RNA sequence: GGGAACGACUCGAGUAGAGUCGAAAAAUCCUGCCCUUCGGGGCAGGAUGCAGCUUCGCUCUUGAGAGCGCCACUUAAGAGGAAUCCCAACGCGCAGAAGCACUAUUUCUCAGUUCGCUGAGAAAAAAGAUAUAGAAAAGUUCGCUUUUCUAUAUCUAAAAGAAACAACAACAACAAC
Reactivity to DMS in 0.01 (KOAc 150mM, MgCl2 10mM, bicine 150mM(pH8.5), 24C), signal-to-noise 3, nucleotides 027 to 126: a030u000c000c010u000g000c000c000c010u000u010c180g050g020g000g030c000a000g000g010a000u000g020c180a110g010c050u010u000c010g010c010u010c000u010u010g010a030g000a130g010c090g020c060c120a100c010u000u000a020a020g000a040g020g000a140a100u000c020c000c000a110a080c190g000c130g030c060a070g000a040a040g010c020a150c220u000a130u000u000u000c000u010c000a020g000u010u020c210g000c000u000g020a020g010a010a020a050a090a080
Reactivity to 2A3 in 0.01 (KOAc 150mM, MgCl2 10mM, bicine 150mM(pH8.5), 24C), signal-to-noise 2, nucleotides 027 to 126: a020u000c000c000u010g000c000c000c020u010u030c290g030g000g000g000c000a010g000g000a000u000g000c020a000g020c000u030u030c030g000c030u010c000u040u030g020a020g010a050g080c070g030c020c010a060c010u010u010a000a000g010a010g040g030a030a050u010c000c020c010a080a050c100g090c030g010c070a040g010a050a010g050c010a020c040u130a180u070u050u010c000u000c000a020g030u060u100c140g040c110u020g000a010g000a020a010a000a000a000

Notes: Chemical mapping of a 177-nucleotide RNA with DMS and 2A3. Values cover nucleotides 27 to 126. The reactions ran in a buffer of 150 mM KOAc, 10 mM MgCl2 and 150 mM bicine (pH 8.5), at 24 C. The DMS profile rests on 1,925 reads. For 2A3 the reverse transcriptase was SuperScript II with manganese.